[RMDB]
RNA sequence: GGGAACGACUCGAGUAGAGUCGAAAAGAACAUCAGUUCGCUGAUGUUCAAAGGCCGAGUAGUGUUGGCUCGCGAAAGGCCAUACAUAAACAUUCACUCAGAAAACAACGUCCUUCGGGACGUUGAACAGAACAUUGGGGUUCGCCCCAAUGUUCUGAAAAGAAACAACAACAACAAC
Reactivity to 2A3 in 0.01 (KOAc 150mM, MgCl2 10mM, bicine 150mM(pH8.5), 24C), signal-to-noise 1, nucleotides 027 to 126: g000a010a030c000a010u000c000a000g010u060u130c220g000c080u010g010a010u000g000u000u000c000a050a030a000g000g000c030c010g000a000g000u010a000g000u000g050u170u140g200g060c300u060c010g000c010g020a000a000a000g030g000c010c000a000u060a000c020a020u050a010a070a000c030a050u060u170c040a060c110u120c000a000g150a060a130a020a010c020a000a000c020g000u000c000c000u010u050c100g080g000g000a000c000g000u020u000g000a000a010
Reactivity to DMS in 0.01 (KOAc 150mM, MgCl2 10mM, bicine 150mM(pH8.5), 24C), signal-to-noise 1, nucleotides 027 to 126: g000a000a010c000a030u000c000a000g010u000u010c190g020c000u000g000a000u000g000u000u010c000a040a030a090g000g030c030c000g010a060g010u000a130g000u000g010u000u000g000g020c190u010c070g000c040g010a140a080a100g000g010c000c000a110u000a060c210a070u040a050a080a060c120a100u000u000c100a070c120u010c100a100g010a090a010a120a210c000a000a000c010g000u000c000c000u000u010c130g060g000g000a000c000g020u000u000g000a070a060
Chemical mapping of a 177-nucleotide RNA with 2A3 and DMS. Source: RMDB library M2PK50, as collected in RNAgym.